The data come from the RNA Mapping Database (RMDB), library OK2TRN. Structure probing data (2A3 and DMS) for a 177-nucleotide construct. The DMS profile rests on 2,804 reads. For DMS the reverse transcriptase was MarathonRT. For 2A3 the reverse transcriptase was SuperScript II with manganese.
RNA sequence: GGGAACGACUCGAGUAGAGUCGAAAAAUUGUGUCAAAUUAAAGGUUGGUUCUCAGCUCAGGAACCCAAAGCUGCCCAGCUUCCUCUGCAGUCCAGUUCAUAGAUCUGCAUCACUCUGCAGCAUCGGCGCAUUAAGUGAUUUCGAUCACUUAAUGCGAAAAGAAACAACAACAACAAC
Reactivity to 2A3 in 0.01 (KOAc 150mM, MgCl2 10mM, bicine 150mM(pH8.5), 24C), signal-to-noise 2, nucleotides 027 to 126: a000u130u160g060u050g050u070c030a050a130a160u070u200a260a090a020g080g020u060u090g030g010u080u060c120u030c040a040g020c020u000c020a020g050g040a050a080c000c030c040a040a090a030g010c030u040g000c010c000c040a020g010c030u040u000c000c010u000c020u010g040c010a010g030u000c040c010a040g020u100u030c030a040u070a130g060a070u030c000u010g000c010a030u060c020a070c050u110c050u050g000c010a040g060c020a040u070c030g050g000
Reactivity to DMS in 0.01 (KOAc 150mM, MgCl2 10mM, bicine 150mM(pH8.5), 24C), signal-to-noise 3, nucleotides 027 to 126: a050u000u000g000u010g030u000c060a060a070a060u000u000a070a130a110g010g000u010u010g020g000u000u000c040u000c060a080g000c050u000c070a110g000g010a070a060c030c000c080a050a100a070g010c020u000g040c110c010c010a050g000c030u000u000c010c010u000c050u000g010c050a070g010u000c020c030a070g000u000u000c100a100u000a100g010a030u000c030u000g000c040a050u000c140a070c140u010c260u000g000c020a020g000c140a040u010c060g010g020
Background:
The RNA was probed in 150 mM KOAc, 10 mM MgCl2 and 150 mM bicine (pH 8.5) at 24 C. The 2A3 profile rests on 1,640 reads.